Chemical mapping of a 177-nucleotide RNA with 2A3 and DMS.
RNA sequence: GGGAACGACUCGAGUAGAGUCGAAAAAUUCAGAACCGGCAGGGGUUCAUCGUGCCAGCUGGCGACACGACUUGGUGUUAUUGCGACGACCAGCUCACCGAGAACGAGCUGUCCAUUAUAUGCGGCACAACAGGUCCCUUUUCGAAGGGACCUGUUGAAAAGAAACAACAACAACAAC
Reactivity to 2A3 in 0.01 (KOAc 150mM, MgCl2 10mM, bicine 150mM(pH8.5), 24C), signal-to-noise 3, nucleotides 027 to 126: a000u280u140c050a000g030a120a020c000c000g060g040c060a030g000g000g050g070u000u000c010a050u090c010g000u000g030c000c010a010g000c010u030g030g010c000g020a010c020a010c050g270a130c050u010u150g110g020u050g030u110u160a210u090u180g020c020g020a100c000g020a050c150c050a020g000c000u020c000a030c030c110g000a010g010a140a060c060g000a060g010c010u010g050u000c000c010a020u070u050a130u030a020u250g050c040g000g020c000a000
Reactivity to DMS in 0.01 (KOAc 150mM, MgCl2 10mM, bicine 150mM(pH8.5), 24C), signal-to-noise 2, nucleotides 027 to 126: a070u070u010c070a140g000a120a040c080c020g000g050c120a050g000g000g020g010u010u000c000a100u000c080g000u030g010c080c170a080g050c020u000g010g000c020g000a030c030a030c040g010a160c030u010u000g000g000u000g000u000u000a120u020u030g020c060g000a150c130g020a110c160c090a070g020c050u010c000a140c150c050g000a040g040a060a050c090g000a120g000c040u010g000u030c000c030a040u020u020a070u020a080u040g010c040g010g010c080a130